[RMDB]
RNA sequence: GGGAACGACUCGAGUAGAGUCGAAAACUUGAAUUUGAGCGUUGACAUCAGCGGCUUCGAACGCUUCAUUACGACCGGCGUGGCUGUAUGUGUACUCAUAGCCUUCAUACGCCACCGUUACAUCUCCCUCAGCCACACGAGUGAGGAACGCCCGCUGCUUAUCUAACUCAUUCGUGAGUUAGAUAAGAAAAGAAACAACAACAACAAC
Reactivity to DMS in 0.01 (KOAc 150mM, MgCl2 10mM, bicine 150mM(pH8.5), 24C), signal-to-noise 4, nucleotides 027 to 156: c040u010u010g030a090a120u000u000u000g000a030g010c020g020u010u000g020a110c060a110u000c030a080g030c010g010g030c050u000u000c050g030a060a040c030g010c000u000u000c100a080u000u000a090c030g000a100c060c030g020g030c070g040u000g010g030c020u020g050u010a030u000g020u000g010u010a110c060u010c120a100u000a150g020c010c050u000u000c040a080u000a060c030g000c010c000a030c030c040g020u000u000a080c060a110u010c060u000c020c020c020u010c040a070g020c020c020a090c100a100c100g010a080g010u000g000a100g010g000a070a090c060g020c070c000c010g010c060u000g010
Reactivity to 2A3 in 0.01 (KOAc 150mM, MgCl2 10mM, bicine 150mM(pH8.5), 24C), signal-to-noise 4, nucleotides 027 to 156: c030u070u140g070a040a100u130u080u120g030a020g000c010g000u010u020g040a040c020a100u070c020a030g000c010g020g000c020u070u090c110g060a040a010c010g010c010u170u120c080a100u110u190a060c110g050a090c070c100g070g010c060g030u010g010g010c060u090g050u090a030u020g100u020g070u110a080c050u060c130a110u120a100g030c020c000u080u100c050a060u040a080c010g010c010c000a010c030c010g000u020u080a090c060a180u040c030u040c040c030c000u010c010a050g080c080c010a080c010a020c080g040a040g040u020g020a020g020g050a060a040c040g030c040c020c010g000c010u010g000